[RMDB]
RNA sequence: GGGAACGACUCGAGUAGAGUCGAAAAGUGUGCAGCGUGUGUCUCUACAGCCCCCAAAAGUUCCUUCCAGGAUGGUGCCCCGGCCCAAGGAUGACUGGGACUGGUCUGACACAGAGACCUCGGAGGAGUAAGACAACGGUUUCGACCGUUGUCUUACAAAAGAAACAACAACAACAAC
Reactivity to DMS in 0.01 (KOAc 150mM, MgCl2 10mM, bicine 150mM(pH8.5), 24C), signal-to-noise 1, nucleotides 027 to 126: g020u000g040u000g010c050a050g010c020g070u000g040u000g000u000c030u000c020u010a100c050a060g000c010c020c020c050c080a050a100a070a050g030u000u000c020c010u020u020c030c030a030g030g010a070u000g010g010u000g000c040c000c010c060g000g020c000c010c000a040a090g000g020a110u010g020a080c070u000g020g050g000a080c050u010g000g000u000c080u000g010a090c080a040c080a110g000a090g020a070c000c000u010c130g030g000a050g010g010a170
Structure probing data (DMS) for a 177-nucleotide construct. The data come from the RNA Mapping Database (RMDB), library OK2TST. High DMS reactivity at an A or C suggests that its Watson-Crick edge is free. For DMS, 1,165 sequencing reads were counted.